[RMDB]
RNA sequence: GGGAACGACUCGAGUAGAGUCGAAAAAACUCGUCAGGCGAUCGACGUUAAUGAAGCAAAUCUCCAAACGCCAACGAUGAGCGUUUCGCAAUCGCCGCUUAAGGCUUUUGCCGAGGCUGCUUGAGCCUAACUUGGGACCCUUCGGGGUCCCAAGUUAAAAAGAAACAACAACAACAAC
Reactivity to DMS in 0.01 (KOAc 150mM, MgCl2 10mM, bicine 150mM(pH8.5), 24C), signal-to-noise 1, nucleotides 027 to 126: a010a020c020u000c010g000u000c010a030g000g000c000g000a020u000c010g000a030c020g070u020u100a070a080u000g000a020a170g000c080a090a030a040u040c030u010c000c010a020a080a120c090g000c080c020a030a110c060g000a110u000g000a010g000c020g000u020u020u080c000g050c000a000a000u000c170g080c000c000g000c250u010u020a120a210g000g000c000u000u000u000u010g020c020c110g050a000g000g030c000u000g050c030u050u020g000a210g020c040c050